An RNA of 207 nucleotides, treated with 2A3 and DMS and read out base by base.
The DMS profile rests on 10,619 reads.
Reactivities are given for positions 27 through 156.
Conditions: 150 mM KOAc, 10 mM MgCl2 and 150 mM bicine (pH 8.5), 24 C.
The 2A3 profile rests on 7,840 reads.
[RMDB]
RNA sequence: GGGAACGACUCGAGUAGAGUCGAAAAGCUGCGUGGAUGGAUGAGGUCAGCGCUGUCGUGUCGGGAAUGGAAUGUGUAAGUGUAACAUUCAGAACCGGGUAACAUUCGGCGACCGAACGCGGCGGUCGGCAGCGUUCGCGCGGGGGCCUGCGAAGCGACACAAAGAUCUUUUCGAAGAUCUUUGUGUAAAAGAAACAACAACAACAAC
Reactivity to 2A3 in 0.01 (KOAc 150mM, MgCl2 10mM, bicine 150mM(pH8.5), 24C), signal-to-noise 6, nucleotides 027 to 156: g050c030u030g000c010g030u020g020g030a050u040g020g070a080u090g060a050g060g060u070c040a040g030c030g000c060u010g020u060c020g010u030g040u030c010g020g000g040a060a100u090g060g020a000a010u010g040u010g020u170a090a150g020u040g040u200a050a030c010a010u010u030c000a010g050a140a040c010c010g050g000g000u070a100a050c030a100u050u080c010g030g000c020g030a030c020c010g000a070a020c010g020c000g030g000c040g000g010u070c040g040g010c000a020g010c010g020u040u060c020g000c000g000c020g010g000g000g020g020c000c010u010g010c040g030a060a010g030c030g060
Reactivity to DMS in 0.01 (KOAc 150mM, MgCl2 10mM, bicine 150mM(pH8.5), 24C), signal-to-noise 3, nucleotides 027 to 156: g030c030u000g020c030g020u000g010g010a060u010g010g010a120u010g010a090g000g010u010c050a150g020c050g020c020u000g040u000c000g010u000g020u000c010g010g020g000a110a150u000g000g010a050a050u000g020u000g020u000a110a250g000u000g020u000a110a070c010a050u000u000c020a130g030a100a140c030c010g020g000g030u000a100a140c100a260u000u000c000g010g020c010g020a170c030c020g000a030a060c020g020c010g000g040c000g000g000u000c040g020g020c000a100g010c020g000u000u010c050g000c050g020c030g000g000g010g010g010c010c040u000g020c020g010a090a100g010c040g010